[RMDB]
RNA sequence: GGGAACGACUCGAGUAGAGUCGAAAAGAUAUGGAUAGGCCACGGACUUUGAUCAGGCUCGGAAACGAGCCUGGGAGUCUAGUGGAACUACCUAUCCUAAGUCAAAAGUUAAGGUUCGCCUUAACAACACACACAAUGAGUUCGCUCAUUGUGUGUGAAAAGAAACAACAACAACAAC
Reactivity to 2A3 in 0.01 (KOAc 150mM, MgCl2 10mM, bicine 150mM(pH8.5), 24C), signal-to-noise 1, nucleotides 027 to 126: g010a030u060a040u230g020g000a010u010a010g000g010c000c000a010c000g030g000a010c050u230u250u240g140a120u300c000a000g000g000c000u020c010g020g010a060a100a030c000g000a000g000c000c000u000g000g000g000a000g000u010c000u180a150g000u000g000g010a010a010c010u160a030c010c000u000a010u000c000c010u030a170a010g080u040c040a020a060a100a150g010u020u020a010a010g060g040u030u150c290g070c030c000u000u030a030a000c010a000a050
Reactivity to DMS in 0.01 (KOAc 150mM, MgCl2 10mM, bicine 150mM(pH8.5), 24C), signal-to-noise 3, nucleotides 027 to 126: g000a050u000a300u000g000g010a040u000a010g010g030c000c000a000c030g000g050a020c000u000u000u030g020a130u020c010a000g020g010c000u000c000g000g000a110a130a190c010g010a020g000c000c000u000g000g000g000a020g000u000c010u000a100g030u000g010g000a010a020c030u010a300c020c020u000a010u000c000c000u010a020a080g010u010c040a100a150a120a150g000u000u000a000a020g020g030u020u010c280g040c000c000u010u000a000a010c000a170a300
Chemical mapping of a 177-nucleotide RNA with 2A3 and DMS. The DMS profile rests on 2,591 reads. For DMS the reverse transcriptase was MarathonRT. The 2A3 profile rests on 4,285 reads. It was measured as part of the RMDB library TTRDES.